This 207-nucleotide RNA was probed chemically with 2A3. Values cover nucleotides 27 to 156. For 2A3 the reverse transcriptase was SuperScript II with manganese.
[RMDB]
RNA sequence: GGGAACGACUCGAGUAGAGUCGAAAAGCGCUCCUGAACGUGACUUCAGAAGACGGCCGCCGACAAGUUAGAUUGUCAAGGCGACAGUGUAGUGACACUGGGUAAUCUAACUUACCAAUCGCCGGCGGGUUGAGUCACGUCAACAACCGUCGAGCGACAUACUCCGUGCGUUCGCGCACGGAGUAUGAAAAGAAACAACAACAACAAC
Reactivity to 2A3 in 0.01 (KOAc 150mM, MgCl2 10mM, bicine 150mM(pH8.5), 24C), signal-to-noise 2, nucleotides 027 to 156: g030c020g010c030u030c000c000u020g050a070a030c000g000u030g000a000c000u080u030c190a070g030a110a040g070a100c030g110g000c000c010g000c000c000g040a070c040a020a000g000u000u000a010g000a060u000u030g050u090c070a120a130g210g070c060g040a020c000a000g000u020g010u060a270g170u150g240a010c000a010c000u010g000g000g030u030a000a000u010c000u040a000a000c000u030u060a120c020c070a040a090u070c030g000c000c000g010g000c000g010g000g000u040u080g010a000g000u000c000a000c000g020u020c010a030a050c030a070a050c010c040g030u080c010g010a010g010c010g020a000